An RNA of 177 nucleotides, treated with 2A3 and DMS and read out base by base. The DMS profile rests on 22,937 reads.
RNA sequence: GGGAACGACUCGAGUAGAGUCGAAAAACCUAUGGAUUCGUCCAUAGGUGCUGGCGCGCGGCCUUUGUCCUGUCGGGUGUGCGUGGUGGGCGAUAUACGCGCAAUAGUGACAAUUCGUUGUCACUAAUCGUUUAUAUCAGUUCGCUGAUAUAAACGAAAAAGAAACAACAACAACAAC
Reactivity to 2A3 in 0.01 (KOAc 150mM, MgCl2 10mM, bicine 150mM(pH8.5), 24C), signal-to-noise 5, nucleotides 027 to 126: a000c000c000u000a000u010g000g010a020u030u080c180g040u020c070c000a000u000a000g010g010u020g020c070u040g050g030c030g000c010g020c020g060g030c000c000u050u060u100g070u040c000c010u040g070u120c060g030g000g060u100g020u040g070c070g010u040g020g040u080g000g030g010c020g010a010u030a010u030a180c030g010c000g000c000a020a080u070a030g010u010g000a000c000a010a030u030u060c200g060u080u010g000u010c000a000c010u000a020a110
Reactivity to DMS in 0.01 (KOAc 150mM, MgCl2 10mM, bicine 150mM(pH8.5), 24C), signal-to-noise 8, nucleotides 027 to 126: a030c000c000u000a000u000g000g000a030u000u010c190g010u000c000c000a010u000a010g000g020u000g010c110u010g000g010c060g020c050g010c050g010g000c040c060u000u000u000g010u010c020c020u000g000u010c080g010g000g010u010g010u000g010c070g020u010g010g020u000g000g000g010c040g000a070u000a120u000a080c070g010c020g010c070a100a140u000a000g010u000g000a020c000a010a040u000u010c200g020u000u000g000u000c000a010c000u000a010a070
The RNA was probed in 150 mM KOAc, 10 mM MgCl2 and 150 mM bicine (pH 8.5) at 24 C. It was measured as part of the RMDB library M2PK50. The 2A3 profile rests on 12,515 reads.